[RMDB]
RNA sequence: GGGAACGACUCGAGUAGAGUCGAAAACAAGGCUGUCCAGCAUAUCGGCGACGGUAACGCAGAUCCCCGGCAGGUUGAGCACGCGAUUGAUACCGAGGGCCGAACCUUCGACAGUGAUUGCGUGAAAAUACUCACCACCAUUCGUGGUGGUGAGUAUAAAAGAAACAACAACAACAAC
Reactivity to DMS in 0.01 (KOAc 150mM, MgCl2 10mM, bicine 150mM(pH8.5), 24C), signal-to-noise 3, nucleotides 027 to 126: c080a150a070g020g020c010u000g040u000c030c120a060g030c120a150u000a100u000c030g010g000c090g010a130c070g010g000u020a060a060c110g010c020a090g000a140u000c020c060c030c020g000g020c120a050g000g000u010u010g020a150g020c020a060c020g010c070g000a070u000u000g010a130u000a050c020c010g030a010g020g010g000c090c190g000a050a300c130c020u000u000c080g000a020c060a000g000u010g000a040u000u000g000c060g020u000g010a070a070a060
Reactivity to 2A3 in 0.01 (KOAc 150mM, MgCl2 10mM, bicine 150mM(pH8.5), 24C), signal-to-noise 1, nucleotides 027 to 126: c030a030a070g120g000c010u010g010u080c050c030a070g020c040a090u030a060u180c060g060g010c040g040a020c040g040g020u060a080a040c060g000c040a010g000a080u010c060c000c070c000g070g060c010a060g010g020u130u110g040a000g050c020a030c040g020c010g030a020u010u160g030a020u090a050c010c010g000a040g030g210g000c000c070g040a060a050c000c010u020u030c040g030a060c030a030g000u030g130a080u030u030g000c030g040u070g000a160a000a000
Chemical mapping of a 177-nucleotide RNA with DMS and 2A3. Source: RMDB library OK2TST, as collected in RNAgym. High 2A3 reactivity points to a flexible backbone, as in loops and unpaired stretches.